[RMDB]
RNA sequence: GGGAACGACUCGAGUAGAGUCGAAAACUGUUUGGUGGAACCUGAUUAGAGGAAACUCAAAGAGUGCUAUGGUAUGGUGACGGAGUGCGCUGGUCAAGAGUGUAAAAGCUUUUUGAACAGAGAGCAUUUCCGGCAGCAGAGAGACCUGAAAAAGCAAGAAUUAAACGUUCUUCGGAACGUUUAAUUCAAAAGAAACAACAACAACAAC
Reactivity to DMS in 0.01 (KOAc 150mM, MgCl2 10mM, bicine 150mM(pH8.5), 24C), signal-to-noise 2, nucleotides 027 to 156: c030u010g040u000u000u000g050g000u000g000g020a050a100c120c040u000g010a170u000u000a120g010a070g010g000a090a060a120c050u020c010a070a070a140g000a120g040u000g000c030u000a040u000g020g000u000a070u000g030g020u000g020a040c010g000g010a040g050u010g000c030g020c000u000g010g010u000c040a000a040g000a000g020u000g000u000a130a110a190a300g000c010u000u010u000u000u010g020a020a000c020a070g010a090g010a200g020c010a040u000u010u000c000c000g000g030c010a070g000c000a060g000a150g000a130g020a040c030c010u010g000a030a050a070a080a060g010c050a090a220
Reactivity to 2A3 in 0.01 (KOAc 150mM, MgCl2 10mM, bicine 150mM(pH8.5), 24C), signal-to-noise 3, nucleotides 027 to 156: c020u040g000u080u040u060g040g010u060g010g060a070a110c030c030u050g040a160u110u190a080g000a030g060g030a080a110a070c060u090c060a050a050a010g070a010g030u040g000c020u080a030u120g010g040u060a050u060g030g080u010g010a010c000g000g000a010g000u000g000c020g000c020u010g000g000u000c000a000a000g010a020g010u080g020u060a010a050a020a040g000c010u050u120u020u040u070g010a020a010c000a000g010a000g030a050g030c010a000u300u180u040c000c000g000g000c010a000g050c020a000g020a010g020a010g020a040c000c040u070g040a080a030a000a000a000g070c060a100a060
This 207-nucleotide RNA was probed chemically with DMS and 2A3. The 2A3 profile rests on 1,750 reads. The RNA was probed in 150 mM KOAc, 10 mM MgCl2 and 150 mM bicine (pH 8.5) at 24 C.